[RMDB]
Chemical mapping of a 207-nucleotide RNA with 2A3 and DMS. Reactivities are given for positions 27 through 156. The 2A3 profile rests on 1,877 reads. Conditions: 150 mM KOAc, 10 mM MgCl2 and 150 mM bicine (pH 8.5), 24 C.
RNA sequence: GGGAACGACUCGAGUAGAGUCGAAAAGGCUCACCGAACGCGAGUACAUCAGGCGCUUCGGGGUCGAGGCGCCGACCGCGCCGAUGAUCCGCACCCUCGCCGCCGUCUACCGCGACCACCCGGACUACCUCGACGAAUGGGCCGCCGAAUGAGCCGCCACACUCAUUAGGUUCGCCUAAUGAGUGUGAAAAGAAACAACAACAACAAC
Reactivity to 2A3 in 0.01 (KOAc 150mM, MgCl2 10mM, bicine 150mM(pH8.5), 24C), signal-to-noise 3, nucleotides 027 to 156: g010g000c000u010c010a030c060c030g040a110a070c030g000c010g030a080g080u080a040c020a180u110c170a080g000g020c000g010c040u100u110c040g020g000g010g040u100c010g000a030g000g000c040g030c020c090g000a030c000c020g020c000g010c010c000g020a070u170g050a060u070c080c020g020c060a070c030c010c000u010c040g020c060c030g040c010c010g010u000c030u060a030c020c010g000c030g070a110c030c040a060c030c000c000g000g000a050c050u140a130c050c040u080c040g110a090c020g050a170a080u120g000g060g000c040c000g030c020c010g070a130a080u060g020a000g010c000c000g040c030
Reactivity to DMS in 0.01 (KOAc 150mM, MgCl2 10mM, bicine 150mM(pH8.5), 24C), signal-to-noise 2, nucleotides 027 to 156: g000g080c010u000c020a110c030c030g010a110a090c080g010c000g020a110g010u000a080c080a190u000c050a090g030g020c030g000c050u000u010c030g010g020g010g010u000c010g030a120g000g010c020g050c040c000g020a020c110c060g010c020g030c000c010g050a130u010g000a040u000c020c010g000c120a180c030c010c010u000c030g080c020c030g040c060c050g040u000c070u000a040c030c020g020c000g000a080c030c020a140c040c040c030g000g050a160c030u000a140c040c030u010c030g000a090c010g010a150a150u000g030g000g030c000c050g030c030c030g050a080a080u000g000a080g010c070c000g010c050